[RMDB]
RNA sequence: GGGAACGACUCGAGUAGAGUCGAAAAUGCCUGAGCUGGUCGACGUCCAGCUCCCUCGGGACCACGCUGCUCUGGGCGGAAGAGUCUUCUGACACUUCUAGCCUAUUCAGCUUCGCGUCCUUGAGGCGAACGUCUCCUAGUUCGCUAGGAGACGUUCAAAAGAAACAACAACAACAAC
Reactivity to 2A3 in 0.01 (KOAc 150mM, MgCl2 10mM, bicine 150mM(pH8.5), 24C), signal-to-noise 2, nucleotides 027 to 126: u190g060c010c000u010g000a000g020c000u000g020g050u170c170g220a190c100g110u060c010c010a010g000c010u000c000c000c000u000c000g000g000g020a000c000c000a010c050g020c000u000g010c000u010c000u000g000g000g000c010g030g000a000a000g000a020g010u000c000u250u100c270u300g020a000c030a020c030u020u000c000u010a100g000c010c010u000a000u090u130c000a000g010c010u010u010c000g000c060g020u000c000c000u000u300g020a010g010g000c010
Reactivity to DMS in 0.01 (KOAc 150mM, MgCl2 10mM, bicine 150mM(pH8.5), 24C), signal-to-noise 1, nucleotides 027 to 126: u000g000c000c020u000g010a000g030c000u000g000g000u000c120g010a200c300g020u030c010c000a020g000c010u000c000c000c000u000c000g000g000g000a010c010c000a120c260g010c000u010g010c020u000c020u000g000g000g020c000g010g010a020a010g020a110g000u010c000u010u010c300u030g010a020c000a090c020u000u010c000u000a110g010c020c000u000a000u010u020c020a040g000c020u000u010c200g020c190g000u010c000c010u000u000g010a000g010g010c300